Background:
Chemical mapping of a 207-nucleotide RNA with DMS and 2A3. Reactivities are given for positions 27 through 156. For 2A3 the reverse transcriptase was SuperScript II with manganese. The reactions ran in a buffer of 150 mM KOAc, 10 mM MgCl2 and 150 mM bicine (pH 8.5), at 24 C.

[RMDB]
RNA sequence: GGGAACGACUCGAGUAGAGUCGAAAAAGCCAGAGCUCUUGAGGGAAGCAAAGGACAUCAUAGAAGAGAAAGUAGACUGCUAAUGGGAAUUCCAAAUGCUUCUCGGGUAAGAACCUUGGAAGGUGAAAGGUUACUUACAUGUGACUUUACAUCGGAAAUCAUUAAAUCGAUUCGUCGAUUUAAUGAUAAAAGAAACAACAACAACAAC
Reactivity to DMS in 0.01 (KOAc 150mM, MgCl2 10mM, bicine 150mM(pH8.5), 24C), signal-to-noise 3, nucleotides 027 to 156: a130g010c000c010a060g000a120g000c010u000c010u010u000g010a200g050g050g010a070a040g020c040a100a100a300g010g020a040c090a100u010c050a160u010a090g010a080a080g000a200g020a150a090a220g020u000a190g020a120c050u000g010c010u020a070a070u000g020g000g010a130a150u000u020c020c010a040a130a190u010g000c030u000u000c010u010c010g000g070g020u000a050a040g010a040a040c010c010u010u020g030g020a050a040g020g030u000g000a100a050a030g010g010u000u000a020c010u000u000a110c130a070u000g010u000g010a020c010u010u000u000a140c010a030u000c010g000g020a060a100
Reactivity to 2A3 in 0.01 (KOAc 150mM, MgCl2 10mM, bicine 150mM(pH8.5), 24C), signal-to-noise 9, nucleotides 027 to 156: a000g070c030c010a040g020a030g030c020u020c030u100u080g040a110g010g000g010a010a000g000c000a010a030a040g020g010a020c010a030u100c010a020u050a080g080a130a020g050a050g060a090a200a020g080u100a060g050a130c070u090g050c030u130a160a090u040g020g000g060a050a060u140u010c010c000a080a070a080u030g000c000u000u010c010u000c000g000g000g000u030a030a020g010a030a030c000c010u050u070g080g040a110a060g040g020u090g060a070a030a000g020g000u020u010a080c000u060u060a030c020a080u180g020u030g030a010c000u060u040u080a050c030a050u050c050g040g050a080a170